[RMDB]
RNA sequence: GGGAACGACUCGAGUAGAGUCGAAAACGGUUACGCCUUCUUUACCGUUAUCAAGGAAGGUACUCGGCCAUGCUAAGGGAAGCAUGAUUCCUUAGGCGCAUGUCGCCGCCAGCAUGGUGUGAGGGGAAAAAGUAUGCUGGGUUCGCCCAGCAUACAACGUUCGAAUUGUGUUCGCACAAUUCGAACGAAAAGAAACAACAACAACAAC
Reactivity to 2A3 in 0.01 (KOAc 150mM, MgCl2 10mM, bicine 150mM(pH8.5), 24C), signal-to-noise 2, nucleotides 027 to 156: c000g010g000u010u000a010c060g040c010c000u000u020c020u020u030u040a020c020c010g300u160u010a030u070c070a000a000g030g000a000a000g000g000u050a040c010u000c020g050g030c020c000a010u010g000c010u020a060a080g020g020g010a040a000g010c070a110u200g050a160u090u010c030c000u040u070a080g010g000c000g000c020a120u270g070u250c050g000c000c000g050c050c020a000g010c000a010u000g010g010u080g210u130g000a030g040g030g000g000a050a170a000a000a000g010u000a000u000g000c000u000g000g010g010u000u110c090g150c000c000c000a000g000c000a000u000a000c000a000a010

An RNA of 207 nucleotides, treated with 2A3 and read out base by base. For 2A3 the reverse transcriptase was SuperScript II with manganese. It was measured as part of the RMDB library M2RFPK.